[RMDB]
RNA sequence: GGGAACGACUCGAGUAGAGUCGAAAAGCCUUUUGUUUAAUGAGUCUGCGAGUCAGUGUUUGUGGCAAGACUAAGGGCUUCCGGCCCGGAGUCGCAGCGAAAGCAAGUCCGAACAGGGCGCAAUAAGCCUUAAGUACUGGUUCGCCAGUACUUAAGGAAAAGAAACAACAACAACAAC
Reactivity to 2A3 in 0.01 (KOAc 150mM, MgCl2 10mM, bicine 150mM(pH8.5), 24C), signal-to-noise 1, nucleotides 027 to 126: g030c000c000u000u030u130u140g110u040u120u070a160a190u140g020a060g130u010c000u030g000c010g030a030g010u050c050a030g060u000g120u200u100u090g130u140g040g030c100a110a000g020a010c030u030a030a020g000g000g030c000u080u070c140c140g000g000c020c010c030g050g010a010g020u050c060g010c050a000g010c010g030a000a000a000g000c020a090a020g050u010c000c000g010a050a020c070a170g040g000g000c020g010c010a000a080u120a150a000g010
Reactivity to DMS in 0.01 (KOAc 150mM, MgCl2 10mM, bicine 150mM(pH8.5), 24C), signal-to-noise 4, nucleotides 027 to 126: g010c010c000u000u010u000u010g020u000u000u000a090a090u000g010a140g010u000c060u000g000c040g010a060g010u010c030a070g000u000g000u000u000u000g020u020g020g010c050a140a080g000a020c010u010a210a190g020g000g010c010u000u010c290c210g010g000c000c000c010g000g000a060g020u000c010g010c170a080g010c050g000a100a060a120g030c030a080a050g010u000c020c040g000a050a090c180a120g000g010g000c000g020c120a060a050u000a100a120g000